[RMDB]
RNA sequence: GGGAACGACUCGAGUAGAGUCGAAAAUUGAAAAAGUCAACCGUAAAUGCGUUAGGUUUUCUCUACCUCGUAUUUACAGCCAUAUUACCAUAUAUGUACCUGGGUGAGGGCAUCGCAGGGAGACUUGUGCUCACUCUGUAGGGAGUUUCCUUGGCCACUAUAUUAGUCAGUUCGCUGACUAAUAUAGAAAAGAAACAACAACAACAAC
Reactivity to 2A3 in 0.01 (KOAc 150mM, MgCl2 10mM, bicine 150mM(pH8.5), 24C), signal-to-noise 3, nucleotides 027 to 156: u060u070g030a000a000a010a040a040g140u090c040a060a070c130c040g000u000a010a000a000u020g000c020g050u080u170a040g020g000u040u010u130u130c070u010c040u050a000c000c000u000c010g000u010a000u000u000u000a000c010a000g000c010c010a040u070a080u150u140a120c040c040a050u080a000u060a010u260g090u110a090c010c020u020g040g000g020u050g010a030g000g030g030c040a040u130c080g030c030a000g000g030g010a050g050a010c000u040u040g020u080g040c020u000c000a010c010u050c070u080g120u130a060g030g010g020a060g000u020u020u020c010c000u030u050g050g000c020c030a040
Reactivity to DMS in 0.01 (KOAc 150mM, MgCl2 10mM, bicine 150mM(pH8.5), 24C), signal-to-noise 2, nucleotides 027 to 156: u000u020g000a120a090a090a090a150g000u000c040a100a060c020c010g000u000a010a020a010u000g020c020g020u000u010a030g030g000u000u000u000u010c210u000c110u000a050c010c030u000c010g080u010a000u000u000u010a000c010a030g000c040c120a140u010a110u010u000a290c050c010a170u020a080u000a090u010g010u000a030c010c000u020g020g030g030u010g010a070g020g000g040c020a040u000c060g000c050a010g010g000g010a140g000a090c020u010u000g050u000g000c040u000c020a010c020u000c010u010g020u020a080g010g010g000a140g020u000u010u010c000c000u000u000g030g050c030c070a220